[RMDB]
RNA sequence: GGGAACGACUCGAGUAGAGUCGAAAAUGGUGAGAAGAAACAUCUUCGAUUUGAGUGCCCCAGAGAAGGACAAAUUUUUUGCCUACCUCACUUUAGCAAAGCAUACCAUCAGCUCAGACUAUGUCAUCCCCAUAGGGACCUAUGGCCAAAUGAAAAAGAUCCCAUACUCAUUCGUGAGUAUGGGAUCAAAAGAAACAACAACAACAAC
Reactivity to 2A3 in 0.01 (KOAc 150mM, MgCl2 10mM, bicine 150mM(pH8.5), 24C), signal-to-noise 1, nucleotides 027 to 156: u050g050g000u010g040a000g000a110a000g010a000a160a010c040a070u040c000u010u010c020g080a050u030u020u100g060a000g010u030g070c010c000c020c000a020g070a000g010a020a020g030g040a030c040a030a050a090u080u090u030u040u100u040g010c020c020u020a100c040c000u000c010a070c020u100u020u030a030g030c010a000a030a040g040c010a010u000a080c000c000a030u040c020a010g080c000u010c010a030g010a080c010u030a020u040g070u010c000a010u050c060c010c020c000a010u070a010g040g000g030a040c010c020u000a010u020g000g000c000c030a040a090a000u050g000a000a040a060a020a030
Reactivity to DMS in 0.01 (KOAc 150mM, MgCl2 10mM, bicine 150mM(pH8.5), 24C), signal-to-noise 1, nucleotides 027 to 156: u000g000g000u020g030a180g000a130a160g000a300a110a050c000a050u000c060u000u000c010g000a090u000u000u000g000a180g060u010g030c000c030c000c090a160g040a150g000a100a220g010g000a100c020a030a030a070u000u000u000u000u070u000g040c000c040u000a150c060c000u000c000a030c040u010u000u000a070g000c050a030a070a110g030c030a020u010a120c030c050a020u000c030a040g000c040u000c010a040g000a130c070u000a060u000g070u000c000a070u040c000c010c000c010a140u000a140g050g000g000a050c050c010u000a080u010g010g020c040c080a050a070a100u000g020a010a140a080a150a230